[RMDB]
RNA sequence: GGGAACGACUCGAGUAGAGUCGAAAAGGCCAUAAAACAGCUGCGAGACACCGUAAGUCAGCAGAUAAGCGCCCAUUACGCUCUGCACCGCCCCUUCACGGACGUUGAGAUCGCGCGCCAUAUCGGCGGCACAAGGAUUAUUCGUAAUCCUUGUGCCAAAAGAAACAACAACAACAAC
Reactivity to DMS in 0.01 (KOAc 150mM, MgCl2 10mM, bicine 150mM(pH8.5), 24C), signal-to-noise 4, nucleotides 027 to 126: g010g010c010c030a110u010a050a070a120a110c170a130g000c020u010g010c050g010a130g000a080c030a070c100c100g000u010a100a050g000u000c030a170g030c030a040g010a100u010a060a070g010c070g010c020c020c130a080u000u000a100c100g020c040u020c030u000g010c030a110c090c030g000c020c010c040c030u010u000c080a090c100g010g010a080c070g020u000u010g000a040g010a040u000c080g010c070g010c060g010c010c020a090u010a070u010c070g020g010c150
Reactivity to 2A3 in 0.01 (KOAc 150mM, MgCl2 10mM, bicine 150mM(pH8.5), 24C), signal-to-noise 3, nucleotides 027 to 126: g040g000c030c010a100u210a090a130a000a010c060a020g020c010u040g000c020g040a180g020a060c030a030c070c120g060u030a060a010g010u070c020a020g030c000a000g020a050u110a060a060g030c020g020c050c020c020a040u070u120a030c060g000c020u020c030u060g030c030a030c050c050g040c010c020c000c030u060u050c040a040c060g090g030a020c020g050u080u030g010a010g010a060u050c010g010c000g020c000g010c040c010a030u060a030u070c020g030g000c000